An RNA of 207 nucleotides, treated with DMS and 2A3 and read out base by base. Reactivities are given for positions 27 through 156. The data come from the RNA Mapping Database (RMDB), library OK3TST. The RNA was probed in 150 mM KOAc, 10 mM MgCl2 and 150 mM bicine (pH 8.5) at 24 C. The 2A3 profile rests on 1,961 reads.

RNA sequence: GGGAACGACUCGAGUAGAGUCGAAAAUUCACUUAAAAUUGAUGCAUAUCACAAUAUGUUCCUAACACGUGACGCGUGUCGCGCCUAUGUUCAGAGUUGGAUCGGCAUAGACGUAGAAGCAGCACACGCCGUAAAACCUAACACCGGGACUAACCUGUACGUGGAAACAUUUCGAUGUUUCCACGUAAAAAGAAACAACAACAACAAC
Reactivity to DMS in 0.01 (KOAc 150mM, MgCl2 10mM, bicine 150mM(pH8.5), 24C), signal-to-noise 2, nucleotides 027 to 156: u000u000c010a080c120u000u010a080a100a130a110u000u000g000a080u010g000c070a100u000a110u000c090a120c100a060a140u000a100u000g030u000u000c010c020u010a110a130c120a060c100g030u000g020a010c030g030c050g000u000g000u010c040g010c010g000c020c000u000a000u000g000u000u000c030a300g030a090g070u000u000g000g020a180u000c050g030g020c000a020u000a030g030a010c000g010u000a100g030a080a070g010c300a050g000c020a030c020a010c000g000c000c020g010u000a040a070a060a030c040c070u000a050a040c020a070c030c090g020g000g030a150c020u000a030a130c050c000u000g000
Reactivity to 2A3 in 0.01 (KOAc 150mM, MgCl2 10mM, bicine 150mM(pH8.5), 24C), signal-to-noise 4, nucleotides 027 to 156: u040u000c030a020c080u190u140a070a060a040a100u140u130g040a050u090g050c050a030u040a040u150c100a030c060a200a090u100a050u150g010u040u060c020c030u070a110a040c040a010c090g130u120g070a050c050g010c010g000u010g000u000c030g000c010g000c010c000u040a010u080g030u140u200c130a040g020a010g040u200u250g140g020a160u030c000g010g000c000a000u010a000g010a000c000g000u020a060g040a040a010g020c030a010g050c010a010c000a000c020g020c010c000g010u020a010a020a050a180c040c020u060a070a000c050a010c140c030g070g010g020a030c040u070a040a070c010c010u050g070